Structure probing data (2A3) for a 207-nucleotide construct. The reactions ran in a buffer of 150 mM KOAc, 10 mM MgCl2 and 150 mM bicine (pH 8.5), at 24 C.

RNA sequence: GGGAACGACUCGAGUAGAGUCGAAAAGCAGAGAAAGAGUGUUUAUCCUUGCAUGGCGCAAUGACUUGUACACAUACAAAGAAAAAUCACAAGAAAAAGGAUUAGCCGGUGCAUAUGAAACGUGGAAAGAAAAUAAGUCGUAUCUUAUGCCAACACCGUAUUGACCUGCAUUCGUGCAGGUCAAUACAAAAGAAACAACAACAACAAC
Reactivity to 2A3 in 0.01 (KOAc 150mM, MgCl2 10mM, bicine 150mM(pH8.5), 24C), signal-to-noise 2, nucleotides 027 to 156: g020c020a010g020a000g050a010a090a030g070a030g030u100g000u020u090u100a090u020c010c050u030u040g000c020a060u080g070g000c020g010c070a020a070u110g010a050c040u070u070g030u140a050c070a000c010a090u180a050c050a010a050a100g210a040a170a050a030a030u080c020a010c000a090a030g130a070a090a010a000a020g060g010a040u070u000a020g080c050c030g070g000u070g010c000a040u040a030u110g070a070a060a000c010g010u000g090g020a120a060a030g040a020a070a020a040u110a020a000g060u060c000g010u050a050u060c020u010u040a030u060g010c000c000a040a020c050a050c080c040